[RMDB]
RNA sequence: GGGAACGACUCGAGUAGAGUCGAAAAGUGCCGGUCGUCACCGAACUGCCGGGCCGCACCAGUGCCUUCCUGGUCGCCCAGGUGCGGGCACGGGUCGACGGUAUCGUGCUGCGUCGCGAAUUCACCGCACUAAGCGUGAGUUCGCUCACGCUUAGUGAAAAGAAACAACAACAACAAC
Reactivity to DMS in 0.01 (KOAc 150mM, MgCl2 10mM, bicine 150mM(pH8.5), 24C), signal-to-noise 6, nucleotides 027 to 126: g020u000g010c030c030g000g010u010c090g010u000c040a080c080c040g020a120a080c060u000g010c010c020g000g000g020c070c020g000c070a060c010c010a070g020u000g010c020c020u000u010c050c020u000g000g010u010c190g020c240c010c020a040g010g010u030g010c150g020g000g010c020a040c010g000g000g010u010c070g010a120c010g000g000u010a050u010c040g010u010g000c030u010g000c080g000u010c050g000c030g000a060a100u000u000c040a070c030c040g010
Reactivity to 2A3 in 0.01 (KOAc 150mM, MgCl2 10mM, bicine 150mM(pH8.5), 24C), signal-to-noise 9, nucleotides 027 to 126: g090u070g030c010c010g020g070u050c030g020u020c020a060c140c020g020a070a040c020u030g010c000c000g010g020g000c020c020g010c010a010c000c000a020g000u030g040c010c020u050u080c030c010u030g030g010u140c080g080c040c010c010a030g040g020u110g080c080g010g000g000c040a020c000g000g000g010u080c060g010a120c000g020g010u040a110u130c030g030u050g020c030u070g050c050g080u130c010g000c010g020a010a010u080u050c040a050c080c030g000
Annotation: An RNA of 177 nucleotides, treated with DMS and 2A3 and read out base by base.